[RMDB]
RNA sequence: GGGAACGACUCGAGUAGAGUCGAAAACAACUGUUAUCUUGCCACUGCAUUGUUAACACUCCAACACAUAGAGUUGAAGUUUAAUCCACCUGCUCUACAAAGGGCUGGUGAAGCUGCUAACUUUUGUACCCACGAACGUUCGCGUUCGUGAAAAGAAACAACAACAACAAC
Reactivity to DMS in 0.01 (KOAc 150mM, MgCl2 10mM, bicine 150mM(pH8.5), 24C), signal-to-noise 4, nucleotides 027 to 129: c050a070a070c110u000g020u020u030a030u040c070u040u120g030c010c010a130c150u050g000c140a060u070u000g000u040u040a070a080c080a100c050u050c050c020a080a020c090a070c040a130u110a070g030a070g070u000u000g020a070a050g020u050u030u030a000a000u020c000c040a030c000c000u010g010c030u010c000u050a070c300a000a190a040g020g040g070c000u030g020g020u010g030a050a030g000c000u000g060c090u020a010a030c040u000u030u030u020g040u040a160c040c070
Reactivity to 2A3 in 0.01 (KOAc 150mM, MgCl2 10mM, bicine 150mM(pH8.5), 24C), signal-to-noise 9, nucleotides 027 to 129: c010a000a010c020u000g010u040u020a050u060c060u070u240g020c020c050a090c070u060g010c050a080u080u080g040u080u130a080a020c020a000c080u000c010c000a040a010c040a010c010a100u200a080g140a020g080u000u020g020a020a010g000u010u050u120a040a030u070c020c000a000c000c000u010g010c010u000c000u040a120c130a080a230a110g000g000g000c000u020g010g000u000g010a010a010g000c010u030g010c010u010a000a020c000u010u010u020u010g020u070a090c000c000